[RMDB]
Source: RMDB library OK2TST, as collected in RNAgym. This 177-nucleotide RNA was probed chemically with 2A3 and DMS. For DMS, 17,572 sequencing reads were counted. For DMS the reverse transcriptase was MarathonRT.
RNA sequence: GGGAACGACUCGAGUAGAGUCGAAAAGUCUUUGCUCUCUCUUGCCAACACGUUCAACUUCCUGAUGACGGGGAAGUACCGCACCCUCGUCGAGCGCAGCCUGUCUCUCCGUCUCGUCUACGGCUCGCAUAGAACGACAGUUCGCUGUCGUUCUAUGAAAAGAAACAACAACAACAAC
Reactivity to 2A3 in 0.01 (KOAc 150mM, MgCl2 10mM, bicine 150mM(pH8.5), 24C), signal-to-noise 6, nucleotides 027 to 126: g020u000c020u050u080u070g020c010u000c000u000c000u000c000u020u050g040c020c020a050a030c050a030c090g050u080u060c030a060a060c040u060u030c010c010u080g090a130u180g030a060c020g010g000g000g000a040a020g030u040a080c010c040g030c020a040c010c000c010u030c010g060u010c030g010a030g010c050g010c020a010g020c000c010u050g020u040c010u000c000u000c050c010g040u010c030u020c040g100u010c020u040a040c020g030g000c000u010c020g050
Reactivity to DMS in 0.01 (KOAc 150mM, MgCl2 10mM, bicine 150mM(pH8.5), 24C), signal-to-noise 9, nucleotides 027 to 126: g020u000c040u000u000u000g010c030u000c030u000c040u000c040u010u000g020c050c040a070a090c110a090c090g010u000u000c060a090a090c080u000u000c010c010u010g010a100u000g010a050c050g010g000g010g010a030a050g010u010a070c060c070g010c120a140c100c010c010u000c030g010u000c030g010a100g020c060g020c080a090g000c040c030u000g000u000c040u000c030u000c030c040g000u010c020u000c040g000u010c040u000a090c070g010g000c050u010c080g000